[RMDB]
RNA sequence: GGGAACGACUCGAGUAGAGUCGAAAAAGACCGAAGCGAGGAGGAAAGCAAAGAAAGCAACGGGGCUAGCCGUCAGGUGUUCCUCCCCCCGAGAGGGGAAGAGUGAGGCUUAUCCCGGGGAACUCGGACGCCGAUGCCUUCGGGCAUCGGAAAAGAAACAACAACAACAAC
Reactivity to 2A3 in 0.01 (KOAc 150mM, MgCl2 10mM, bicine 150mM(pH8.5), 24C), signal-to-noise 2, nucleotides 027 to 129: a000g050a020c000c000g000a020a030g040c040g040a050g010g010a000g000g000a080a030a000g020c050a070a040a110g000a070a090a020g010c040a070a030c040g000g000g110g010c050u060a030g000c000c010g050u040c030a070g000g080u100g080u040u010c020c000u000c000c000c000c010c000c010g060a100g060a080g120g000g000g010a000a000g030a010g020u150g050a010g010g000c000u030u100a020u030c000c000c040g030g010g000g000a010a020c000u000c020g010g030a010c020g010
Reactivity to DMS in 0.01 (KOAc 150mM, MgCl2 10mM, bicine 150mM(pH8.5), 24C), signal-to-noise 3, nucleotides 027 to 129: a100g050a180c010c030g030a180a000g010c120g000a030g000g040a020g040g000a070a090a010g000c150a060a140a020g020a080a120a070g020c130a140a140c000g000g000g000g000c110u010a120g010c050c020g030u040c030a050g040g040u030g050u050u000c020c000u030c020c000c010c030c030c070g090a130g020a100g000g010g010g030a000a000g010a000g020u030g030a120g010g030c070u000u060a100u040c000c000c000g000g000g000g000a060a030c060u010c060g000g020a090c220g060
An RNA of 170 nucleotides, treated with 2A3 and DMS and read out base by base. For DMS, 8,067 sequencing reads were counted. DMS adducts were read by reverse transcription with MarathonRT. The reactions ran in a buffer of 150 mM KOAc, 10 mM MgCl2 and 150 mM bicine (pH 8.5), at 24 C. 2A3 adducts were read by reverse transcription with SuperScript II with manganese. It was measured as part of the RMDB library 15KLIB.